[RMDB]
RNA sequence: GGGAACGACUCGAGUAGAGUCGAAAAAUGCUAAAAUGCGCGAACCAAAAUGUGAUAUGGGGGUUGCGAUGUUAAACGGAUUAAUAUAUGUUAUAGGUGGAAUCGUUAAAGGUGACACGUGUACCGACGCACUAGAGAGUUUAUCAGAAGAUGGAUGGCUCAAAGAAAGAUUCGUCUUUCUUUGAGCAAAAGAAACAACAACAACAAC
Reactivity to 2A3 in 0.01 (KOAc 150mM, MgCl2 10mM, bicine 150mM(pH8.5), 24C), signal-to-noise 2, nucleotides 027 to 156: a000u100g000c020u060a090a040a060a080u160g020c040g020c060g040a010a060c010c000a000a040a040a150u170g040u060g030a060u090a170u180g020g000g000g000g010u010u020g000c010g010a070u060g010u060u130a070a100a020c050g000g040a010u070u070a130a050u090a020u010a050u120g000u050u050a080u070a100g020g010u040g020g030a030a020u040c040g010u010u110a040a090a080g010g000u020g030a000c010a020c120g020u020g030u020a060c010c020g030a020c090g050c010a000c070u070a030g010a000g000a000g100u060u060u020a050u040c020a020g060a090a000g020a000u050g020g040a040u040g080
Reactivity to DMS in 0.01 (KOAc 150mM, MgCl2 10mM, bicine 150mM(pH8.5), 24C), signal-to-noise 3, nucleotides 027 to 156: a080u010g020c030u020a050a070a080a090u020g030c020g040c020g020a090a110c060c010a080a080a110a080u000g030u000g010a110u000a070u040g030g000g030g040g020u000u030g020c030g000a090u010g020u000u010a100a040a100c000g010g000a180u000u000a050a100u010a080u010a070u020g000u000u000a120u010a090g020g000u000g000g010a080a060u000c060g020u010u000a040a080a080g020g000u000g000a090c040a080c070g020u000g030u000a090c040c030g010a100c040g010c060a060c040u000a100g000a120g010a100g040u000u000u010a060u000c010a100g010a050a080g010a070u000g020g030a140u010g000

The data come from the RNA Mapping Database (RMDB), library OK3TST. An RNA of 207 nucleotides, treated with 2A3 and DMS and read out base by base. The RNA was probed in 150 mM KOAc, 10 mM MgCl2 and 150 mM bicine (pH 8.5) at 24 C. For 2A3, 1,171 sequencing reads were counted.